[RMDB]
RNA sequence: GGGAACGACUCGAGUAGAGUCGAAAAUGCAAGGAUAAGCGCACUUAUGGAAGGGCACAAGGCUCCGCUGGUAACGGAUAGCCACUACAUCAACAACGAUUACCUGAAGGAGACAAUCAAGGAGGAGCAUCCCAGCAGUAUUCGUACUGCUGGGAUGAAAAGAAACAACAACAACAAC
Reactivity to 2A3 in 0.01 (KOAc 150mM, MgCl2 10mM, bicine 150mM(pH8.5), 24C), signal-to-noise 8, nucleotides 027 to 126: u150g000c030a050a050g080g010a090u070a130a060g050c040g030c030a030c050u100u090a050u180g050g060a030a040g030g020g010c030a030c030a100a040g030g010c000u000c020c020g000c030u030g010g070u040a040a010c020g020g010a090u120a060g040c010c010a030c050u150a060c030a130u160c040a060a110c020a040a010c060g150a170u080u090a030c000c000u020g030a060a030g060g020a030g020a040c070a050a040u090c060a070a020g040g010a030g010g010a030g050
Reactivity to DMS in 0.01 (KOAc 150mM, MgCl2 10mM, bicine 150mM(pH8.5), 24C), signal-to-noise 4, nucleotides 027 to 126: u020g020c040a070a070g020g010a060u020a040a100g020c080g020c040a070c060u010u000a050u010g010g020a070a060g000g010g000c080a050c080a030a120g020g000c030u010c000c000g010c040u010g000g000u020a060a190c060g000g000a140u040a110g000c020c050a060c120u030a050c100a070u000c110a110a050c160a130a130c100g020a040u020u000a010c020c020u000g010a060a080g000g000a040g000a070c110a070a080u020c070a040a050g000g000a050g010g000a060g000
An RNA of 177 nucleotides, treated with 2A3 and DMS and read out base by base. As a SHAPE reagent, 2A3 marks flexible, mostly unpaired nucleotides at the ribose 2'-OH. For 2A3 the reverse transcriptase was SuperScript II with manganese. It was measured as part of the RMDB library OK1LIB. The 2A3 profile rests on 8,068 reads. Values cover nucleotides 27 to 126. Conditions: 150 mM KOAc, 10 mM MgCl2 and 150 mM bicine (pH 8.5), 24 C. The DMS profile rests on 7,219 reads.